Chemical mapping of a 177-nucleotide RNA with DMS. For DMS, 596 sequencing reads were counted. It was measured as part of the RMDB library M2PK90.
RNA sequence: GGGAACGACUCGAGUAGAGUCGAAAACAAUUUUCAACUUUUCACCUUCCCUUGAAACUUGAAUUUUCCUACAAUCAAACUACCUCCUAUAAAAUCCAAUCCUCUUCUUUACCAAUCCGAAAAUAAAAGUAGAAAGAAUGUUCGCAUUCUUUCUACUAAAAGAAACAACAACAACAAC
Reactivity to DMS in 0.01 (KOAc 150mM, MgCl2 10mM, bicine 150mM(pH8.5), 24C), signal-to-noise 1, nucleotides 027 to 126: c120a010a040u000u000u000u000c010a060a070c080u000u000u000u000c040a060c130c040u000u010c010c000c000u020u000g000a000a030a040c140u000u020g030a120a110u000u010u000u000c030c000u000a050c160a090a080u020c090a050a080a160c130u000a050c070c060u000c010c010u020a070u000a060a060a090a130u000c040c060a030a060u010c020c030u000c020u000u000c050u030u020u000a100c030c010a020a120u000c040c010g000a070a030a060a130u010a080a070a070